[RMDB]
Chemical mapping of a 177-nucleotide RNA with DMS and 2A3.
It was measured as part of the RMDB library OK1LIB.
The RNA was probed in 150 mM KOAc, 10 mM MgCl2 and 150 mM bicine (pH 8.5) at 24 C.
The 2A3 profile rests on 4,346 reads.
Values cover nucleotides 27 to 126.

RNA sequence: GGGAACGACUCGAGUAGAGUCGAAAACACCGGACAAACGGCAAUCGGCGCUGGCCUUGCAUCGGUGUUUUACGCCACGACGCCCCUUUGGACGAUCCUCGUGGCGAAUCUGCUGACGGCUGACGAAAGUACCUACCUACUUCGGUAGGUAGGUACUAAAAGAAACAACAACAACAAC
Reactivity to DMS in 0.01 (KOAc 150mM, MgCl2 10mM, bicine 150mM(pH8.5), 24C), signal-to-noise 2, nucleotides 027 to 126: c000a070c000c000g000g000a070c080a000a060a110c170g000g000c040a120a080u010c070g040g010c100g030c050u000g010g020c100c080u000u030g030c050a130u000c010g000g020u010g010u000u000u000u000a110c030g000c000c000a060c030g000a100c100g000c030c020c010c300u060u040u040g040g000a070c050g000a160u030c170c210u030c040g040u010g010g030c030g000a060a000u000c040u000g000c000u000g010a100c150g000g000c020u000g000a080c080g000a100a070
Reactivity to 2A3 in 0.01 (KOAc 150mM, MgCl2 10mM, bicine 150mM(pH8.5), 24C), signal-to-noise 4, nucleotides 027 to 126: c010a000c000c020g020g030a050c050a050a130a020c090g030g020c020a050a080u180c090g080g000c070g050c120u070g130g030c010c040u030u040g040c050a080u060c020g000g000u000g010u010u010u030u000a010c000g000c010c000a010c020g010a000c020g030c010c030c000c020u080u150u300g050g010a040c040g040a050u080c000c010u010c020g000u020g010g000c010g000a000a070u010c030u050g010c040u060g020a030c060g050g000c020u020g020a020c040g070a120a170